The data come from the RNA Mapping Database (RMDB), library TTRINS. This 177-nucleotide RNA was probed chemically with DMS. For DMS, 12,236 sequencing reads were counted. For DMS the reverse transcriptase was MarathonRT. Conditions: 150 mM KOAc, 10 mM MgCl2 and 150 mM bicine (pH 8.5), 24 C.
RNA sequence: GGGAACGACUCGAGUAGAGUCGAAAAGAUAUGGAUGCGUGUAUGGAGUGUAACAUUAGUUGAAAAUGGGUCGGAAACGACCCAAUUUUCAACUAAUGUUACACUAUGAAGUACCGCAUCCUAAGUCCUACAGAAAUAAGUUCGCUUAUUUCUGUAGAAAAGAAACAACAACAACAAC
Reactivity to DMS in 0.01 (KOAc 150mM, MgCl2 10mM, bicine 150mM(pH8.5), 24C), signal-to-noise 5, nucleotides 027 to 126: g000a120u000a300u010g010g020a020u000g000c000g020u020g030u000a010u000g000g000a020g020u010g010u010a010a010c000a010u000u000a000g010u000u000g000a010a000a010a020u000g000g000g030u010c000g010g010a140a100a260c000g000a010c000c000c000a000a000u000u000u000u000c000a000a010c000u000a000a000u000g000u000u000a000c010a000c000u000a060u020g010a150a240g010u000a010c000c010g000c000a000u000c000c000u000a010a080g000u010c040